[RMDB]
RNA sequence: GGGAACGACUCGAGUAGAGUCGAAAAGCGCCUCACGCCGGAAGCGAAGGUAAAAACUGGGAUCGCGGGCUAGAUCAGCGCGCAGCACCUUGACCGCAACGUCGCGGUGCAACCGGAGGUCGCGGGCCUGCAACCUAAAUUUCGAUUUAGGUUGCAGAAAAGAAACAACAACAACAAC
Reactivity to 2A3 in 0.01 (KOAc 150mM, MgCl2 10mM, bicine 150mM(pH8.5), 24C), signal-to-noise 8, nucleotides 027 to 126: g010c020g040c000c000u020c020a090c070g040c020c020g050g060a070a030g030c040g060a070a040g070g030u140a050a070a020a030a060c050u050g010g030g050a090u090c040g000c000g070g030g000c020u050a050g030a270u150c100a000g020c050g010c010g000c090a010g030c010a040c010c000u020u070g050a030c000c020g040c070a090a110c130g150u140c090g010c010g040g000u030g010c010a030a010c020c000g040g000a020g040g030u140c080g000c010g040g030g010c000
Reactivity to DMS in 0.01 (KOAc 150mM, MgCl2 10mM, bicine 150mM(pH8.5), 24C), signal-to-noise 8, nucleotides 027 to 126: g020c060g010c010c020u010c070a140c130g010c030c020g020g000a090a170g020c020g010a080a070g000g010u020a080a060a080a110a110c060u010g000g000g010a140u020c050g000c000g020g000g010c010u010a090g010a120u030c140a060g010c020g000c040g000c050a110g000c040a070c020c010u020u010g000a040c000c030g000c170a130a150c280g000u010c070g020c200g000g010u000g020c050a100a190c070c030g000g000a070g000g010u000c030g020c040g000g000g010c080
Chemical mapping of a 177-nucleotide RNA with 2A3 and DMS.